[RMDB]
RNA sequence: GGGAACGACUCGAGUAGAGUCGAAAAUGAAGCUUAUUCGUAAGCUUCAAAAGCGUACUACCUGACAUCGAUCUCCAACAGGCACAAUUUCCCAAAUAGGAAAUUAGCCUGUCGGAGGGAGUCAGGUAUCGCAAAGCUUUCCGAUUCGUCGGAAAGCGCUAAAACCUCGUUUCGACGAGGUUUUAGCAAAAGAAACAACAACAACAAC
Reactivity to 2A3 in 0.01 (KOAc 150mM, MgCl2 10mM, bicine 150mM(pH8.5), 24C), signal-to-noise 2, nucleotides 027 to 156: u090g000a010a000g000c000u010u000a000u070u090c170g130u010a020a000g000c000u000u000c000a010a000a010a050g020c000g030u080a070c050u010a000c010c000u000g000a010c000a260u250c120g060a090u050c000u000c010c000a020a000c000a000g000g000c010a040c050a250a020u010u000u010c030c030c030a250a300a070u300a090g000g010a010a000a000u010u010a000g000c000c000u000g000u000c020g000g000a000g000g000g000a000g000u000c000a000g000g000u000a010u020c000g030c000a080a060a000g010c000u000u000u000c000c000g020a020u020u050c180g050u010c000g100g000a000a000a000g000c010
Reactivity to DMS in 0.01 (KOAc 150mM, MgCl2 10mM, bicine 150mM(pH8.5), 24C), signal-to-noise 1, nucleotides 027 to 156: u000g010a010a030g000c000u000u000a050u000u000c250g050u000a000a040g020c000u000u000c020a010a040a050a170g010c020g010u030a100c130u000a000c000c000u000g000a020c020a240u000c180g010a080u000c000u000c000c010a010a020c020a010g020g030c010a100c120a040a020u010u010u000c000c000c060a030a130a210u020a030g010g000a050a010a000u000u000a100g000c000c000u000g050u000c000g010g040a030g000g010g030a060g020u000c000a020g020g000u000a000u000c000g060c020a090a070a130g000c000u000u000u000c000c000g000a060u000u000c260g030u000c030g010g000a010a000a000g000c020